[RMDB]
This 177-nucleotide RNA was probed chemically with DMS.
The RNA was probed in 150 mM KOAc, 10 mM MgCl2 and 150 mM bicine (pH 8.5) at 24 C.
RNA sequence: GGGAACGACUCGAGUAGAGUCGAAAAGAUAUGGACUGCAGUGGAGCUACUCGGAAACGAGUUAGCUAUGAAGCUGACAGUCCUAAGUCAAAACUAGGGCGUUAAACUUCGGUUUAACGCCCUAGAACUAUCUGCACCAGUUCGCUGGUGCAGAUAGAAAAGAAACAACAACAACAAC
Reactivity to DMS in 0.01 (KOAc 150mM, MgCl2 10mM, bicine 150mM(pH8.5), 24C), signal-to-noise 1, nucleotides 027 to 126: g000a000u000a300u000g000g010a010c020u000g000c030a010g030u010g000g040a000g000c000u000a000c000u000c000g000g000a060a110a200c000g020a030g000u010u000a000g010c000u000a160u030g000a090a280g010c000u010g000a280c000a000g000u000c000c000u000a010a130g000u010c060a050a100a040a200c020u010a000g040g000g040c000g010u010u000a000a000a020c000u010u030c260g030g000u000u010u000a010a000c000g000c000c000c000u000a000g010a010a180